[RMDB]
RNA sequence: GGGAACGACUCGAGUAGAGUCGAAAAGAAAGAGAGGUGUGGAAUGUAAUGCACCGGGACACUUUUUCGAUGAAGCCGAUGGAUGGGUUCAUCCACCAGCAGAUGCAUUCCAGAAUGUCCAAUAGAACAUGGAGCAUGCAUUCGUGCAUGCUCCAUGAAAAGAAACAACAACAACAAC
Reactivity to 2A3 in 0.01 (KOAc 150mM, MgCl2 10mM, bicine 150mM(pH8.5), 24C), signal-to-noise 2, nucleotides 027 to 126: g000a010a030a000g040a010g000a070g010g030u040g010u050g060g190a150a090u150g060u170a130a080u170g050c010a030c070c000g000g000g000a020c010a020c060u100u070u000u080u040c070g020a030u030g060a000a000g020c000c000g000a040u040g090g050a040u060g020g230g060u290u300c030a040u020c040c000a010c000c000a000g030c010a000g010a110u180g080c030a060u040u000c000c010a000g120a010a030u050g020u010c010c000a000a050u070a060g050a070a020
Reactivity to DMS in 0.01 (KOAc 150mM, MgCl2 10mM, bicine 150mM(pH8.5), 24C), signal-to-noise 2, nucleotides 027 to 126: g000a060a050a010g020a010g020a070g010g010u000g020u010g020g030a130a110u010g000u020a070a080u010g000c000a040c020c040g000g020g020a020c120a130c050u000u000u000u000u000c030g010a110u000g000a130a120g000c010c010g060a070u000g000g010a040u010g020g010g020u010u020c010a020u000c000c020a030c040c010a040g010c020a030g010a110u020g000c030a130u000u000c020c030a130g010a110a070u000g010u000c020c000a120a140u010a110g010a030a140

Structure probing data (2A3 and DMS) for a 177-nucleotide construct. DMS adducts were read by reverse transcription with MarathonRT. It was measured as part of the RMDB library OK2TST. 2A3 adducts were read by reverse transcription with SuperScript II with manganese.